[RMDB]
RNA sequence: GGGAACGACUCGAGUAGAGUCGAAAAUAGUAGCCAGUCGUAGUUGGGAUUGACAUAUGUAAUUAUGUCAUGAACGUGGAAUUCCUAGUAGUUGGUAGUCACUAACGACUAACGAAUGAGUCCCUGUAAUGGUCAGUGUGUUCGCACACUGACCAUUAAAAGAAACAACAACAACAAC
Reactivity to 2A3 in 0.01 (KOAc 150mM, MgCl2 10mM, bicine 150mM(pH8.5), 24C), signal-to-noise 1, nucleotides 027 to 126: u100a000g060u020a000g020c020c060a000g010u010c000g040u010a010g000u030u090g120g030g000a090u090u000g000a000c000a000u010a000u060g130u170a090a270u110u030a110u000g000u020c000a000u020g000a000a030c040g000u120g060g090a070a060u180u130c000c000u040a070g120u110a080g010u040u010g000g000u030a030g090u150c000a010c050u040a150a000c000g000a000c070u080a140a010c000g020a050a040u090g000a030g090u000c030c010c000u000g070u030
Reactivity to DMS in 0.01 (KOAc 150mM, MgCl2 10mM, bicine 150mM(pH8.5), 24C), signal-to-noise 2, nucleotides 027 to 126: u000a100g010u000a150g000c050c020a100g000u030c020g060u000a070g030u000u040g050g000g000a210u000u000g010a000c010a000u000a000u030g010u060a120a090u000u010a000u000g000u010c040a000u000g010a270a130c110g000u020g000g000a120a140u000u000c000c060u000a050g040u010a050g010u030u000g000g010u000a070g000u000c050a090c010u000a160a060c060g000a010c000u000a040a100c110g000a080a090u010g000a130g070u000c010c010c010u010g000u020

Notes
The data come from the RNA Mapping Database (RMDB), libraries RFM100 and RFMREP. Structure probing data (2A3 and DMS) for a 177-nucleotide construct. For 2A3 the reverse transcriptase was SuperScript II with manganese.